Chemical mapping of a 177-nucleotide RNA with DMS and 2A3.
The reactions ran in a buffer of 150 mM KOAc, 10 mM MgCl2 and 150 mM bicine (pH 8.5), at 24 C.
DMS adducts were read by reverse transcription with MarathonRT.
Reactivities are given for positions 27 through 126.
[RMDB]
RNA sequence: GGGAACGACUCGAGUAGAGUCGAAAAUCCGAGUGGACGUGCGUCCUCCUUCGGAUGCCCAGGUCGGACCGCGAGGAGGUGGAGAUGCCAUGCCGACCCGAAGAGGAAAGAAGGACGCGAGACGCGACAGUCUGUAAGAGUUCGCUCUUACAGACUGAAAAGAAACAACAACAACAAC
Reactivity to DMS in 0.01 (KOAc 150mM, MgCl2 10mM, bicine 150mM(pH8.5), 24C), signal-to-noise 2, nucleotides 027 to 126: u010c000c010g000a020g010u010g000g020a010c050g030u000g040c040g010u000c000c020u000c030c030u010u000c010g000g000a030u000g000c030c020c010a180g000g020u000c020g020g010a180c040c110g010c170g010a100g000g000a180g000g020u000g020g000a190g010a110u000g000c030c040a100u000g040c000c010g010a040c010c010c040g000a040a050g010a210g000g000a100a110a130g010a110a060g000g020a030c010g010c050g000a090g020a080c080g000c090g000a210
Reactivity to 2A3 in 0.01 (KOAc 150mM, MgCl2 10mM, bicine 150mM(pH8.5), 24C), signal-to-noise 2, nucleotides 027 to 126: u030c010c010g000a040g170u090g000g040a080c150g140u200g070c000g000u040c010c000u050c020c000u020u020c010g000g070a040u070g010c020c000c030a000g000g030u020c010g010g040a100c030c020g000c050g070a130g060g050a060g070g060u050g040g110a210g020a090u220g110c010c010a070u120g030c000c000g030a020c000c010c020g090a140a080g030a090g040g150a110a020a080g130a020a010g050g000a010c000g000c000g000a050g000a000c100g010c040g060a040